The data come from the RNA Mapping Database (RMDB), library OK1LIB. This 177-nucleotide RNA was probed chemically with 2A3 and DMS. In probing experiments dimethyl sulfate is read out at A N1 and C N3, which are open when not base-paired. The DMS profile rests on 2,042 reads. The RNA was probed in 150 mM KOAc, 10 mM MgCl2 and 150 mM bicine (pH 8.5) at 24 C. For 2A3 the reverse transcriptase was SuperScript II with manganese.
RNA sequence: GGGAACGACUCGAGUAGAGUCGAAAAGAAAAAGAGCACGAAGUACAGAGAUACGAAAGUAUCGAGGCCUAAUGUACUGAAAGAGUUGUGCUCGGAUACGAAGGCCUAAGUAUCUACUCUGAAGAAAGGGAUAAAUUACCUUCGGGUAAUUUAUCCCAAAAGAAACAACAACAACAAC
Reactivity to 2A3 in 0.01 (KOAc 150mM, MgCl2 10mM, bicine 150mM(pH8.5), 24C), signal-to-noise 2, nucleotides 027 to 126: g160a010a070a020a030a050g000a000g010c000a000c060g070a120a000g000u000a000c000a000g070a000g000a010u000a000c000g070a060a010a040g000u000a000u010c010g010a030g030g000c050c050u020a040a020u040g000u000a000c000u030g040a120a110a040g210a070g090u200u240g000u050g000c000u000c000g000g000a010u010a000c000g000a070a040g040g040c000c000u000a010a000g030u010a000u000c000u010a010c060u040c020u140g070a100a040g080a140a160a040
Reactivity to DMS in 0.01 (KOAc 150mM, MgCl2 10mM, bicine 150mM(pH8.5), 24C), signal-to-noise 2, nucleotides 027 to 126: g040a130a080a070a050a040g000a000g010c030a010c050g050a170a030g020u000a010c000a050g000a300g000a020u000a000c000g000a130a010a110g060u000a000u010c000g000a300g000g000c080c010u010a140a170u040g050u000a000c020u010g000a080a060a130g000a190g060u020u020g000u010g000c000u020c000g020g000a100u010a020c010g020a130a080g000g000c010c000u010a140a150g030u000a010u000c030u000a200c040u000c020u030g000a030a100g000a070a060a020